[RMDB]
RNA sequence: GGGAACGACUCGAGUAGAGUCGAAAAGAUAUGGAUCGGCCAUCGAUCGUAGCUAAUACUUAUUCGGAAACGAAUAAGGAUAACUACGGGAGGCGAUCCUAAGUCAAAACUGCUCUUCGGAGCAGAACGCUUAAGUUCUGUUCGCAGAACUUAAGCGAAAAGAAACAACAACAACAAC
Reactivity to DMS in 0.01 (KOAc 150mM, MgCl2 10mM, bicine 150mM(pH8.5), 24C), signal-to-noise 2, nucleotides 027 to 126: g000a040u000a300u010g000g010a000u000c000g060g050c010c020a250u010c200g040a060u000c000g020u000a000g010c000u010a130a050u000a130c010u000u000a000u000u000c000g030g010a070a080a110c000g000a000a010u000a000a000g000g000a050u000a070a180c010u000a010c010g000g000g000a040g060g020c000g000a000u010c000c030u010a040a060g000u000c020a070a060a170a150c000u000g020c000u000c000u000u020c200g000g000a010g020c000a000g000a030a120
Reactivity to 2A3 in 0.01 (KOAc 150mM, MgCl2 10mM, bicine 150mM(pH8.5), 24C), signal-to-noise 3, nucleotides 027 to 126: g020a020u080a050u170g040g010a000u030c060g300g130c100c030a280u300c070g060a050u000c000g020u000a000g000c010u030a060a010u140a300c000u000u010a010u000u000c020g000g070a090a070a080c010g010a000a000u010a000a000g030g010a000u010a010a010c000u000a000c000g000g020g010a010g000g040c010g010a000u000c000c000u020a160a000g000u000c010a000a010a140a180c010u010g000c000u000c000u070u090c300g120g000a020g030c000a010g000a000a010